[RMDB]
RNA sequence: GGGAACGACUCGAGUAGAGUCGAAAAUGCGCUGACCAAUGCAACCUCGGCCUAUCUCUUGGCACUGGCAAAUCAUGGAGUUCUCGCCUGCAAGGAGAAUCCUGCGUUACUCUUAGGGCUUAAUACGCUUCCCAUUCAAGUUCGCUUGAAUGGGAAGAAAAGAAACAACAACAACAAC
Reactivity to 2A3 in 0.01 (KOAc 150mM, MgCl2 10mM, bicine 150mM(pH8.5), 24C), signal-to-noise 3, nucleotides 027 to 126: u060g010c020g020c010u050g040a100c010c020a050a040u130g020c010a040a110c010c020u030c020g060g000c020c000u050a100u110c030u020c000u060u060g040g000c020a010c090u050g040g000c010a010a060a080u110c060a060u130g040g020a060g040u070u020c020u040c020g040c010c030u080g030c070a050a040g030g000a030g030a050a060u050c020c020u030g010c000g060u040u040a070c020u020c020u090u100a060g030g010g010c020u040u100a060a020u120a130c070g020
Reactivity to DMS in 0.01 (KOAc 150mM, MgCl2 10mM, bicine 150mM(pH8.5), 24C), signal-to-noise 4, nucleotides 027 to 126: u000g020c060g010c040u010g000a110c050c040a100a080u010g000c080a060a110c080c040u000c060g040g020c040c030u000a090u000c040u000c030u000u010g010g010c030a110c070u010g010g010c050a060a070a110u000c070a060u000g010g010a090g000u000u000c020u000c030g020c030c020u000g010c130a080a130g000g000a070g000a090a100u000c030c020u000g010c090g010u000u000a090c030u000c040u000u010a110g010g010g010c070u000u010a030a050u020a080c230g010

This 177-nucleotide RNA was probed chemically with 2A3 and DMS. High DMS reactivity at an A or C suggests that its Watson-Crick edge is free. Conditions: 150 mM KOAc, 10 mM MgCl2 and 150 mM bicine (pH 8.5), 24 C. For 2A3 the reverse transcriptase was SuperScript II with manganese. For DMS, 3,005 sequencing reads were counted. For 2A3, 3,594 sequencing reads were counted. The data come from the RNA Mapping Database (RMDB), library OK2TST. As a SHAPE reagent, 2A3 marks flexible, mostly unpaired nucleotides at the ribose 2'-OH.